Conditions: 150 mM KOAc, 10 mM MgCl2 and 150 mM bicine (pH 8.5), 24 C. The record gives the reactivity of an RNA of 177 nucleotides to 2A3. Values are in units of 0.01, from 0 to 300, in steps of 10.

RNA sequence: GGGAACGACUCGAGUAGAGUCGAAAACAUUGUGCCUUUCCAAGUCCUAUCGGAAAUCCUGAUGCUAACUUAGUUAUCUCUGGACUUAAAGGUUGGCCUAAAGCAUCAUUUAUUGUCUGGAGAACUGGAGUCAUGCACUCUUCGGAGUGCAUGACUCAAAAGAAACAACAACAACAAC
Reactivity to 2A3 in 0.01 (KOAc 150mM, MgCl2 10mM, bicine 150mM(pH8.5), 24C), signal-to-noise 2, nucleotides 027 to 126: c100a040u110u050g000u030g120c000c020u010u020u010c040c010a040a030g040u000c000c000u000a030u090c050g070g020a070a110a000u030c000c010u070g030a070u100g010c020u000a020a020c000u110u130a040g050u110u150a270u010c010u000c010u010g000g000a000c000u000u000a010a000a010g060g000u080u080g070g050c000c030u240a180a120a020g060c000a000u020c010a040u000u000u000a020u020u200g020u000c000u010g000g000a000g020a020a010c020u000g000